[RMDB]
RNA sequence: GGGAACGACUCGAGUAGAGUCGAAAACAUAUGAAAUUGUAGCGCGGAUCUCCGUACAGCAGACAUUCGAGAUCGAUGAGUGAAUUUGGUUUGGGUAGAAACGUGAUGACCUUCUUGUCGCCGUCGCAGUCCGUGUUAGCGCCGGUGAAUAUGCCCAGGAUCUGUAUAGGUUCGCCUAUACAGAUCCAAAAGAAACAACAACAACAAC
Reactivity to DMS in 0.01 (KOAc 150mM, MgCl2 10mM, bicine 150mM(pH8.5), 24C), signal-to-noise 1, nucleotides 027 to 156: c040a170u000a150u030g020a070a120a100u010u020g000u000a130g000c020g050c040g050g000a150u020c090u000c000c010g010u010a020c070a130g050c000a100g040a080c030a180u010u000c020g010a130g010a110u000c010g020a090u020g000a100g030u010g000a060a080u000u000u020g030g020u020u020u000g010g030g020u010a080g010a040a050a070c080g030u020g020a060u000g010a050c000c030u000u030c050u000u000g010u000c020g050c000c010g000u000c040g030c040a090g000u000c030c120g000u010g030u000u000a180g000c030g040c090c030g000g020u000g010a070a080u000a080u000g010c040c020c020a250
Reactivity to 2A3 in 0.01 (KOAc 150mM, MgCl2 10mM, bicine 150mM(pH8.5), 24C), signal-to-noise 4, nucleotides 027 to 156: c010a030u160a060u170g080a040a120a050u160u130g040u110a020g030c020g000c020g090g020a050u030c050u000c070c020g020u080a030c030a050g050c040a020g050a070c010a050u080u120c040g040a010g000a120u070c070g020a070u070g020a010g060u070g030a090a090u080u060u130g090g010u040u050u090g090g010g000u080a050g100a060a070a020c050g020u040g000a040u050g040a040c040c000u060u030c030u050u140g040u060c010g000c020c000g000u010c000g020c010a010g060u070c040c050g020u090g040u120u060a070g000c020g000c020c000g000g000u010g000a000a000u070a040u070g010c000c000c030a050
An RNA of 207 nucleotides, treated with DMS and 2A3 and read out base by base. For 2A3 the reverse transcriptase was SuperScript II with manganese. Source: RMDB library OK3TST, as collected in RNAgym. The 2A3 profile rests on 1,783 reads. The reactions ran in a buffer of 150 mM KOAc, 10 mM MgCl2 and 150 mM bicine (pH 8.5), at 24 C.